[RMDB]
Chemical mapping of a 207-nucleotide RNA with 2A3 and DMS. For 2A3, 1,123 sequencing reads were counted. The reactions ran in a buffer of 150 mM KOAc, 10 mM MgCl2 and 150 mM bicine (pH 8.5), at 24 C. For DMS, 3,158 sequencing reads were counted. Source: RMDB library OK3TST, as collected in RNAgym.
RNA sequence: GGGAACGACUCGAGUAGAGUCGAAAACUGGCCUUUUGUUUCCCCUCCUCCAUUGCCCUAAUGAUUUAGCCCAGGUGGCAAGUUGCGUAGAGAAACUACUCCAGGGAAAUAAGAGUCCUUACUACCAGCCUGGGCCUCAGGUGUGCACCCAGCGGCCAACACAAACAAUCUUCGGAUUGUUUGUGUUAAAAGAAACAACAACAACAAC
Reactivity to 2A3 in 0.01 (KOAc 150mM, MgCl2 10mM, bicine 150mM(pH8.5), 24C), signal-to-noise 2, nucleotides 027 to 156: c070u030g040g010c040c040u040u110u050u120g040u030u070u010c010c030c000c040u050c010c010u050c030c020a130u030u070g000c000c000c000u080a090a040u100g100a110u070u040u300a010g010c020c000c010a000g010g010u020g000g020c040a040a010g030u050u100g060c060g010u080a000g000a010g060a170a180a080c050u150a030c010u010c020c060a060g000g000g090a060a020a030u120a150a000g030a020g090u010c010c000u000u040a040c050u030a030c000c000a010g140c000c000u010g000g020g020c010c000u000c000a010g000g000u050g010u020g010c040a030c030c020c030a020g010c030g020g000c010c020
Reactivity to DMS in 0.01 (KOAc 150mM, MgCl2 10mM, bicine 150mM(pH8.5), 24C), signal-to-noise 2, nucleotides 027 to 156: c010u000g030g000c030c010u000u020u050u010g030u000u000u000c000c000c010c000u000c060c030u000c010c050a120u000u000g010c000c000c000u000a070a110u020g030a130u000u000u010a110g030c010c010c000a210g010g020u020g010g010c000a050a080g000u010u000g010c070g020u000a150g010a230g020a130a080a090c030u010a080c010u000c030c140a150g010g010g000a040a040a090u010a090a140g000a180g010u000c030c020u010u000a080c020u000a030c010c010a060g020c020c020u000g020g000g020c010c040u020c050a090g000g030u000g010u000g010c000a100c020c010c050a220g030c030g010g020c040c010